Structure probing data (DMS and 2A3) for a 170-nucleotide construct. The DMS profile rests on 52,248 reads. The 2A3 profile rests on 54,285 reads. It was measured as part of the RMDB library 15KLIB. The reactions ran in a buffer of 150 mM KOAc, 10 mM MgCl2 and 150 mM bicine (pH 8.5), at 24 C.

RNA sequence: GGGAACGACUCGAGUAGAGUCGAAAAAGGGUGAUCCACUCGGAGUUGGACGGGAAAAGCACAUCCAGAGGACCCCUUCGACGAACAGAAGGAUCUGGUACCGGGGAGGAAUAGCCCAUAGUACAAGUGACUACCAUGUUCGCAUGGUAGAAAAGAAACAACAACAACAAC
Reactivity to DMS in 0.01 (KOAc 150mM, MgCl2 10mM, bicine 150mM(pH8.5), 24C), signal-to-noise 9, nucleotides 027 to 129: a040g000g020g020u010g030a130u040c000c010a150c020u000c090g030g030a090g050u020u010g000g000a050c110g000g000g010a050a050a080a100g040c150a120c080a160u030c040c040a000g010a080g020g020a140c100c080c010c020u000u000c030g000a080c140g020a060a040c170a120g000a020a060g000g000a120u010c030u030g000g000u000a080c030c050g000g000g000g000a110g030g010a030a010u060a220g020c000c030c020a040u040a010g040u030a050c120a000a000g020u000g030a190
Reactivity to 2A3 in 0.01 (KOAc 150mM, MgCl2 10mM, bicine 150mM(pH8.5), 24C), signal-to-noise 9, nucleotides 027 to 129: a000g030g000g010u040g010a080u000c010c010a020c030u010c030g020g010a100g070u130u070g060g050a060c060g020g010g040a040a100a020a020g080c060a070c010a160u040c010c000a020g010a020g040g070a060c020c020c030c000u010u000c020g080a090c030g060a220a050c020a120g010a020a010g020g010a050u020c010u040g000g020u030a040c020c000g000g000g010g010a220g030g010a030a040u110a130g000c000c000c010a020u070a020g060u070a020c050a130a060g060u050g150a020